[RMDB]
RNA sequence: GGGAACGACUCGAGUAGAGUCGAAAAGAAAUAGUGCAUGCUGUCAUGAUGUUGCCAGACGAAGUUGCUUUUGGAAUAUCUGGUACUAGUGAAAGUGGUUAUUCCAUCCGUGAGAAUGGGGAAGACAACAGUCGUGAAACUUCGGUUUCACGACUGUAAAAGAAACAACAACAACAAC
Reactivity to DMS in 0.01 (KOAc 150mM, MgCl2 10mM, bicine 150mM(pH8.5), 24C), signal-to-noise 1, nucleotides 027 to 126: g000a090a100a040u010a080g010u000g000c070a070u000g000c030u000g000u020c030a050u000g000a070u000g000u000u020g040c000c000a050g000a010c090g030a020a120g030u000u010g010c080u000u000u000u000g020g000a050a080u000a190u000c010u020g000g000u000a010c020u000a300g020u000g000a050a070a050g030u000g010g000u010u000a070u000u000c010c000a060u020c000c020g010u010g000a130g000a100a010u000g000g000g010g000a060a100g000a090c130a060
Reactivity to 2A3 in 0.01 (KOAc 150mM, MgCl2 10mM, bicine 150mM(pH8.5), 24C), signal-to-noise 1, nucleotides 027 to 126: g090a020a050a000u160a000g010u180g130c130a180u050g010c000u000g060u170c030a060u060g110a040u070g050u160u090g050c040c000a000g000a010c030g000a020a060g060u180u150g100c000u110u130u090u140g150g010a180a000u060a000u080c000u010g000g000u010a040c010u010a040g080u000g110a070a030a050g160u090g010g090u080u050a030u100u020c000c000a000u100c070c030g060u080g030a100g070a060a000u050g030g000g010g050a040a020g010a020c030a060

An RNA of 177 nucleotides, treated with DMS and 2A3 and read out base by base. Conditions: 150 mM KOAc, 10 mM MgCl2 and 150 mM bicine (pH 8.5), 24 C. Source: RMDB library OK2TRN, as collected in RNAgym. For 2A3 the reverse transcriptase was SuperScript II with manganese. Reactivities are given for positions 27 through 126. The 2A3 profile rests on 590 reads.